Conditions: 150 mM KOAc, 10 mM MgCl2 and 150 mM bicine (pH 8.5), 24 C. The record gives the reactivity of an RNA of 177 nucleotides to DMS. The DMS profile rests on 1,605 reads.
RNA sequence: GGGAACGACUCGAGUAGAGUCGAAAAGGUACGGUAUGGCGAGGUUUGCCUCGGAGUCAAGCGGGAGGGCUCCCAGGGCGCCGCACGGGCGCAGUGUUGUGCGAGACUCUAGGCCCGUGACAGAGUGCUAAGUUGAUUUCUUCGGAAAUCAACUUAGAAAAGAAACAACAACAACAAC
Reactivity to DMS in 0.01 (KOAc 150mM, MgCl2 10mM, bicine 150mM(pH8.5), 24C), signal-to-noise 1, nucleotides 027 to 126: g010g020u000a070c040g000g020u000a050u000g000g000c040g010a090g020g020u010u010u010g020c020c040u010c250g000g010a030g020u000c050a070a120g020c080g000g000g010a050g020g000g010c030u000c020c030c110a090g000g000g020c030g000c020c030g000c060a040c070g000g000g010c000g020c070a050g000u000g010u020u000g010u000g010c130g010a140g000a060c010u000c000u010a110g000g010c000c010c010g000u010g000a080c090a050g010a150g020u010g000